RNA sequence: GGGAACGACUCGAGUAGAGUCGAAAACAAAAGCUAGCCAUUGGGGCUGUCACUUCACUAAACGAGAAAGCAGGUUCCCAGGCAGCUACUCCUAGUGAGUCCUGUAGGCCCUAAGGAUCAUUGCUGCGUAAUAGGCACCAUUCGUGGUGCCUAUUACAAAAGAAACAACAACAACAAC
Reactivity to 2A3 in 0.01 (KOAc 150mM, MgCl2 10mM, bicine 150mM(pH8.5), 24C), signal-to-noise 2, nucleotides 027 to 126: c030a030a110a010a000g030c000u110a020g010c020c010a170u060u050g030g040g030g040c010u010g070u100c020a080c070u030u000c010a040c070u220a170a230a070c160g010a040g050a140a030a010g010c000a010g060g060u080u080c000c000c000a010g090g000c010a010g000c000u030a030c000u000c000c020u020a010g040u040g150a030g100u060c040c030u160g040u100a120g040g100c010c000c010u030a030a060g030g020a020u030c010a070u040u230g030c010u030g030c010
Reactivity to DMS in 0.01 (KOAc 150mM, MgCl2 10mM, bicine 150mM(pH8.5), 24C), signal-to-noise 2, nucleotides 027 to 126: c130a080a130a090a050g010c020u000a100g050c010c010a150u010u000g000g030g000g010c020u000g000u010c070a200c040u000u000c020a050c080u020a040a090a180c180g010a090g000a030a090a090g000c050a020g020g020u010u010c000c000c000a080g010g000c040a010g010c020u000a100c050u000c010c010u010a000g010u010g010a040g010u000c070c050u000g010u000a150g030g000c010c020c030u000a080a070g010g000a060u010c070a060u010u010g010c070u010g020c160